[RMDB]
RNA sequence: GGGAACGACUCGAGUAGAGUCGAAAAGUGGCAAGGCAAGCCAGAAUGGGCAACAAGGCGUCGCGCGUCGGCAGGGCCGUCAGGCUUCGUCCAUUCCUCUCGACCGUGCUGCCAAGCAGAACGCCGAAAAAUCCCGGGUAUUCGUACCCGGGAUUUUAAAAGAAACAACAACAACAAC
Reactivity to DMS in 0.01 (KOAc 150mM, MgCl2 10mM, bicine 150mM(pH8.5), 24C), signal-to-noise 1, nucleotides 027 to 126: g010u000g020g020c010a020a130g010g000c030a110a080g000c010c020a050g000a060a060u000g020g040g000c060a090a050c100a060a210g000g000c020g040u000c050g010c300g000c210g000u000c110g000g040c050a060g000g000g020c030c000g000u030c200a040g000g030c180u010u000c110g020u030c000c090a100u000u000c010c030u000c050u000c020g030a050c000c080g060u000g010c010u000g030c060c080a040a210g040c050a080g010a130a110c010g010c040c020g000a000